[RMDB]
The record gives the reactivity of an RNA of 207 nucleotides to DMS and 2A3. It was measured as part of the RMDB library OK3TST. Conditions: 150 mM KOAc, 10 mM MgCl2 and 150 mM bicine (pH 8.5), 24 C. For 2A3, 655 sequencing reads were counted.
RNA sequence: GGGAACGACUCGAGUAGAGUCGAAAAUAUCAAGCUGAUCCGUUCUACCUGUCCGUUUAGGAUCAGCGAGGGACAGGAUGACCUCUCCGAGAGGAGUAAAAUGGUCUGUGCGACGACGUAUGACCGGACCGCUUAGUCGUCGCUUGGGUCCGGGAGAAAUGCAGUAAUGCUUCGGCAUUACUGCAUUAAAAGAAACAACAACAACAAC
Reactivity to DMS in 0.01 (KOAc 150mM, MgCl2 10mM, bicine 150mM(pH8.5), 24C), signal-to-noise 1, nucleotides 027 to 156: u000a080u010c040a040a130g000c000u000g010a000u000c000c000g000u000u000c120u060a110c050c040u010g000u000c050c050g040u000u000u010a130g020g000a010u000c000a020g030c010g000a070g000g000g020a130c060a090g020g010a080u000g000a070c000c030u000c010u000c000c010g020a300g040a300g010g000a050g010u000a020a040a070a090u000g040g050u000c000u000g030u000g040c020g010a070c010g000a000c020g020u010a060u010g030a230c030c030g030g020a100c030c100g000c090u000u000a090g010u000c010g000u000c000g040c040u000u000g000g030g020u000c020c010g000g010g000a190g000a130
Reactivity to 2A3 in 0.01 (KOAc 150mM, MgCl2 10mM, bicine 150mM(pH8.5), 24C), signal-to-noise 1, nucleotides 027 to 156: u250a040u110c060a020a030g040c000u000g000a000u000c030c010g090u220u020c020u000a040c020c000u080g040u000c020c010g060u070u040u170a030g000g020a020u020c010a000g000c000g010a060g000g000g000a000c000a020g170g000a070u100g000a000c000c000u020c000u000c000c000g080a100g000a000g060g000a000g000u170a010a030a000a040u190g000g000u000c010u030g090u020g000c000g000a010c000g000a000c030g090u120a090u210g100a110c070c000g050g000a050c020c010g000c080u020u080a020g000u010c000g000u000c000g000c010u000u020g030g000g000u020c000c000g010g000g040a070g030a000